[RMDB]
RNA sequence: GGGAACGACUCGAGUAGAGUCGAAAACAGCAAUUAUUCGUAAUUGCUGAAUGGCGGACCCAGCGCGGAAGGAGCGCGCAGGACUCCUUCCCCGCCUUUUAAUAAGCAGGUACUUCGGUACCUGCAAGAAGGUAAGAUACUUCGGUAUCUUACCUUCAAAAGAAACAACAACAACAAC
Reactivity to 2A3 in 0.01 (KOAc 150mM, MgCl2 10mM, bicine 150mM(pH8.5), 24C), signal-to-noise 6, nucleotides 027 to 126: c000a000g010c000a000a010u010u020a020u060u160c170g050u060a010a010u000u000g000c010u000g010a020a070u120g010g010c040g040g010a050c010c000c020a050g130c070g000c050g040g010a020a010g010g000a020g010c110g000c060g050c150a040g040g160a140c000u000c000c000u000u010c000c000c000c010g000c000c000u080u200u050u090a260a260u210a150a040g000c000a000g000g000u010a010c010u040u110c190g050g000u000a000c010c000u000g000c000a000a000
Reactivity to DMS in 0.01 (KOAc 150mM, MgCl2 10mM, bicine 150mM(pH8.5), 24C), signal-to-noise 4, nucleotides 027 to 126: c010a000g010c000a010a000u000u000a030u010u020c180g020u010a000a010u000u000g000c000u000g000a040a050u020g000g020c040g010g010a290c010c000c020a120g010c150g020c240g000g000a030a010g000g000a020g020c070g020c170g010c190a070g000g000a190c020u000c000c000u000u000c000c000c010c010g010c000c020u000u000u010u010a070a140u010a100a130g010c000a010g010g010u000a000c010u000u000c160g030g010u000a000c000c000u000g000c010a000a020